Source information:
This 177-nucleotide RNA was probed chemically with DMS and 2A3. For DMS the reverse transcriptase was MarathonRT. The RNA was probed in 150 mM KOAc, 10 mM MgCl2 and 150 mM bicine (pH 8.5) at 24 C. Source: RMDB library OK2TST, as collected in RNAgym. The DMS profile rests on 7,225 reads.
RNA sequence: GGGAACGACUCGAGUAGAGUCGAAAACAAACAUGUGAUACUACGGCUGACUGAUACUACUGUCCAUGACUGAUUACGACUUACUAAGGGAGUCAUCACCGUAUAGUAAGCGUCCACAAACGAGACCACCAUGACACUUAUUCGUAAGUGUCAUGGUAAAAGAAACAACAACAACAAC
Reactivity to DMS in 0.01 (KOAc 150mM, MgCl2 10mM, bicine 150mM(pH8.5), 24C), signal-to-noise 7, nucleotides 027 to 126: c060a090a130a150c130a070u000g000u010g000a110u000a050c090u000a060c100g010g000c080u000g010a090c060u030g010a070u010a040c060u000a080c070u000g020u010c010c030a050u000g000a100c080u000g000a110u000u000a100c030g010a120c020u000u000a010c020u010a040a150g010g010g000a100g010u010c160a050u010c120a120c020c010g010u010a110u000a040g010u000a010a020g010c040g000u000c080c040a170c140a040a040a060c130g010a110g010a090c090c120
Reactivity to 2A3 in 0.01 (KOAc 150mM, MgCl2 10mM, bicine 150mM(pH8.5), 24C), signal-to-noise 8, nucleotides 027 to 126: c030a010a070a010c030a070u100g050u080g090a050u060a120c030u030a020c070g040g000c030u040g020a080c020u020g020a070u050a110c010u020a020c020u050g020u030c030c000a050u050g050a060c050u040g040a080u070u090a020c060g090a100c030u010u030a010c000u040a050a100g110g030g010a020g080u050c030a020u050c010a070c050c000g040u120a040u030a160g010u010a020a020g020c010g020u000c020c010a110c060a070a140a030c090g010a030g030a070c010c020